[RMDB]
RNA sequence: GGGAACGACUCGAGUAGAGUCGAAAAUGUGUCUCCUUCGGGAGACACAAACGCUCGCAGCCCGAGCCCGCACGGGCAAGGCAGCGGCCAGCCAGCGAGCUAUGUGUUAUCAAUUCGUUGAUAACAACAGUCAUCAAGGAUUCGUCCUUGAUGACUGAAAAGAAACAACAACAACAAC
Reactivity to 2A3 in 0.01 (KOAc 150mM, MgCl2 10mM, bicine 150mM(pH8.5), 24C), signal-to-noise 1, nucleotides 027 to 126: u060g000u000g000u000c000u020c020c000u000u120c220g090g000g000a000g000a000c000a000c000a000a000a000c030g000c000u020c000g000c030a010g020c010c000c000g000a000g020c000c040c020g130c040a080c160g000g020g000c000a000a060g060g020c000a030g050c050g140g060c010c030a010g010c020c010a030g020c000g000a000g000c040u090a130u160g190u000g000u010u020a010u000c020a020a010u100u070c190g080u100u040g010a000u000a010a000c020a010a020
Reactivity to DMS in 0.01 (KOAc 150mM, MgCl2 10mM, bicine 150mM(pH8.5), 24C), signal-to-noise 2, nucleotides 027 to 126: u010g010u010g010u000c000u000c000c000u000u020c190g010g030g020a020g010a010c000a000c000a020a110a110c250g020c030u000c000g030c020a210g020c010c000c000g000a110g010c010c010c010g010c180a110c130g030g000g000c020a150a070g000g000c030a080g000c030g020g000c100c010a170g030c020c040a110g000c010g000a010g010c010u000a040u000g010u000g000u000u000a000u000c010a030a010u010u000c250g010u010u000g000a010u000a000a020c000a030a210
Structure probing data (2A3 and DMS) for a 177-nucleotide construct. For 2A3, 2,080 sequencing reads were counted. Reactivities are given for positions 27 through 126. Source: RMDB library M2PK50, as collected in RNAgym. The DMS profile rests on 1,535 reads.